[RMDB]
This 177-nucleotide RNA was probed chemically with DMS and 2A3.
The reactions ran in a buffer of 150 mM KOAc, 10 mM MgCl2 and 150 mM bicine (pH 8.5), at 24 C.
For DMS, 1,077 sequencing reads were counted.
The data come from the RNA Mapping Database (RMDB), libraries RFM100 and RFMREP.
RNA sequence: GGGAACGACUCGAGUAGAGUCGAAAAUAACCCAGCUCUAUGUGGGUAAAGCCUCUCAUUAGCCGCGCGAACCUCUGCAACGGAAGAUCAUUCAUAGCAACAAUACAUUAGUUUCCAGUGAAUUGCUCAAAACUUUUAUCUUCGGAUAAAAGUUUUGAAAAGAAACAACAACAACAAC
Reactivity to DMS in 0.01 (KOAc 150mM, MgCl2 10mM, bicine 150mM(pH8.5), 24C), signal-to-noise 1, nucleotides 027 to 126: u060a110a190c020c000c000a240g000c100u000c030u010a030u020g000u030g000g020g000u030a090a140a170g030c050c020u030c070u000c020a160u020u010a110g000c040c000g040c010g000c010g000a120a060c030c000u020c070u040g020c020a030a060c140g030g030a020a030g020a020u050c100a020u040u000c000a030u000a050g050c060a010a000c160a050a060u010a030c070a030u000u070a060g020u040u000u000c090c000a060g030u040g000a030a030u000u000g000c130u010
Reactivity to 2A3 in 0.01 (KOAc 150mM, MgCl2 10mM, bicine 150mM(pH8.5), 24C), signal-to-noise 4, nucleotides 027 to 126: u080a030a060c000c000c010a060g010c010u020c020u080a150u170g070u070g010g010g030u070a090a080a030g020c000c000u020c000u000c010a060u010u160a010g010c030c000g010c000g000c020g030a030a070c000c000u010c020u060g000c000a050a030c010g110g010a040a040g020a090u070c030a050u070u060c030a030u070a090g050c030a010a060c030a070a090u110a120c020a050u050u050a020g030u020u020u020c020c020a000g010u020g100a080a170u070u080g030c010u000